[RMDB]
RNA sequence: GGGAACGACUCGAGUAGAGUCGAAAACGACUACGCAGAGCAGCUGACCAUCGCAGUCCGCAUGCUCGAGUUCGCGGCCGGUUACCGCGACGGCGUGAAUGAAGCGCAGGUCGCAGCAUGAGCGCCCGCGACGAACUGGCCGAGGUGAUCAAGGCCGCUGUCUUCGAUAAUUCGUUAUCGAAGACAGAAAAGAAACAACAACAACAAC
Reactivity to 2A3 in 0.01 (KOAc 150mM, MgCl2 10mM, bicine 150mM(pH8.5), 24C), signal-to-noise 3, nucleotides 027 to 156: c030g050a040c050u170a040c070g020c140a060g010a020g010c010a000g000c010u010g000a010c010c010a190u260c170g040c120a080g000u010c020c020g010c020a130u020g000c000u000c000g000a010g000u080u090c030g000c010g040g000c000c010g000g010u020u030a080c030c000g010c030g040a070c110g000g010c000g020u020g010a050a030u020g010a080a050g000c010g000c130a170g150g090u230c010g000c010a000g000c000a010u030g020a010g000c000g000c000c010c000g000c010g010a050c040g010a030a000c010u010g000g000c010c000g000a010g000g010u070g010a130u180c110a110a070g120g010c010c030g020
Reactivity to DMS in 0.01 (KOAc 150mM, MgCl2 10mM, bicine 150mM(pH8.5), 24C), signal-to-noise 1, nucleotides 027 to 156: c030g020a060c020u000a030c070g010c050a180g010a130g010c000a090g010c030u000g010a060c040c020a160u000c160g050c130a060g010u000c010c080g030c010a120u020g000c010u000c030g000a080g030u010u000c020g050c010g030g040c000c010g010g010u000u000a030c050c030g020c010g000a040c100g000g030c000g000u000g020a270a090u000g000a130a200g020c000g000c000a120g030g030u000c030g040c000a140g050c030a070u000g000a300g020c030g020c050c020c020g020c020g000a120c010g000a020a040c010u010g010g040c000c000g000a030g000g030u010g010a110u010c030a050a130g000g020c000c010g000